[RMDB]
The data come from the RNA Mapping Database (RMDB), library 15KLIB.
An RNA of 170 nucleotides, treated with DMS and 2A3 and read out base by base.
For 2A3, 23,187 sequencing reads were counted.
The DMS profile rests on 43,174 reads.
For DMS the reverse transcriptase was MarathonRT.
Conditions: 150 mM KOAc, 10 mM MgCl2 and 150 mM bicine (pH 8.5), 24 C.

RNA sequence: GGGAACGACUCGAGUAGAGUCGAAAAGCUCUGGGGAGAAAAGGGAGGAUCGGAUGGGAAGAGUAUAUCCCAUGGGAAUCCCUGGGUUCCCCUCGUGUCCAGCCCCUCCCCGGUCCGAUGGAAGGGGGUACAGACGUGUUCGCACGUCUGAAAAGAAACAACAACAACAAC
Reactivity to DMS in 0.01 (KOAc 150mM, MgCl2 10mM, bicine 150mM(pH8.5), 24C), signal-to-noise 7, nucleotides 027 to 129: g030c020u000c010u060g040g020g040g010a010g030a050a060a100a070g020g020g030a070g000g000a050u050c080g040g020a020u020g010g000g000a030a110g000a190g000u040a110u010a070u000c000c010c010a000u000g010g000g010a300a090u020c020c010c030u000g000g000g000u030u000c030c010c010c060u020c090g010u000g020u050c020c110a140g010c030c020c040c040u030c020c010c010c020g000g000u000c010c010g040a060u010g020g010a090a080g020g000g000g030g030u000a070
Reactivity to 2A3 in 0.01 (KOAc 150mM, MgCl2 10mM, bicine 150mM(pH8.5), 24C), signal-to-noise 7, nucleotides 027 to 129: g030c020u010c020u040g000g000g020g010a020g030a020a090a030a020g030g000g010a020g010g010a050u080c040g050g100a030u020g030g010g010a060a030g080a040g180u170a060u030a050u170c000c000c010a020u050g020g010g050a050a100u030c020c000c010u010g010g000g000u070u040c000c000c000c000u000c010g030u040g030u000c020c000a030g000c050c000c000c010u040c000c000c000c000g040g050u040c020c020g060a050u100g040g030a010a030g010g000g000g000g000u020a040